[RMDB]
Description: The record gives the reactivity of an RNA of 177 nucleotides to 2A3. Reactivities are given for positions 27 through 126. Conditions: 150 mM KOAc, 10 mM MgCl2 and 150 mM bicine (pH 8.5), 24 C. 2A3 adducts were read by reverse transcription with SuperScript II with manganese. Source: RMDB library OK1LIB, as collected in RNAgym. For 2A3, 655 sequencing reads were counted.
RNA sequence: GGGAACGACUCGAGUAGAGUCGAAAAGCAGUUGCGAUGUCAACAGAACCAUCAAUGUGCCACGUCUUAAUAGGAUGUGCAAACUUCUCAACAUACCAUGUCUACAACAUGUGCUCAGGGCAGGAAAGGCAAAGUUCGGAUUCGUCCGAACUUUGCCAAAAGAAACAACAACAACAAC
Reactivity to 2A3 in 0.01 (KOAc 150mM, MgCl2 10mM, bicine 150mM(pH8.5), 24C), signal-to-noise 2, nucleotides 027 to 126: g190c250a060g000u010u010g000c120g010a140u120g030u120c000a000a000c000a190g000a040a060c000c000a040u180c000a000a070u010g000u160g070c130c000a000c000g000u000c000u150u000a170a110u130a160g060g000a000u000g080u000g000c090a000a150a000c080u250u170c000u000c000a000a040c000a030u080a050c170c000a070u050g050u000c060u090a070c000a120a030c000a010u070g010u000g000c000u120c220a020g020g000g010c050a050g000g090a060a000a000